Structure probing data (DMS) for a 177-nucleotide construct.
Source: RMDB library RFM100, as collected in RNAgym.
RNA sequence: GGGAACGACUCGAGUAGAGUCGAAAAGAAAGAAAGAAAGAAAGAAAUAAGGCUUCUGUCUACUACUGGAGACACUGGUAGUAUAAAACCCAGAGUCUCCAGUAAUGGACGGGAGCCUUAUUUCUAAGUAACCCAAUUAUUUCGAUAAUUGGGUUACAAAAGAAACAACAACAACAAC
Reactivity to DMS in 0.01 (KOAc 150mM, MgCl2 10mM, bicine 150mM(pH8.5), 24C), signal-to-noise 3, nucleotides 027 to 126: g000a150a130a120g000a120a080a110g000a130a070a090g020a130a170a030g010a000a000a000u000a000a010g000g000c000u000u010c000u010g010u000c000u000a050c040u000a000c000u000g000g000a030g020a010c000a040c010u010g000g010u000a110g010u090a160u050a070a040a110a130c180c020c010a000g000a080g010u000c000u000c000c000a000g000u000a000a020u000g020g000a010c000g000g000g000a000g000c000c000u000u000a000u010u000u000c000u010a000a050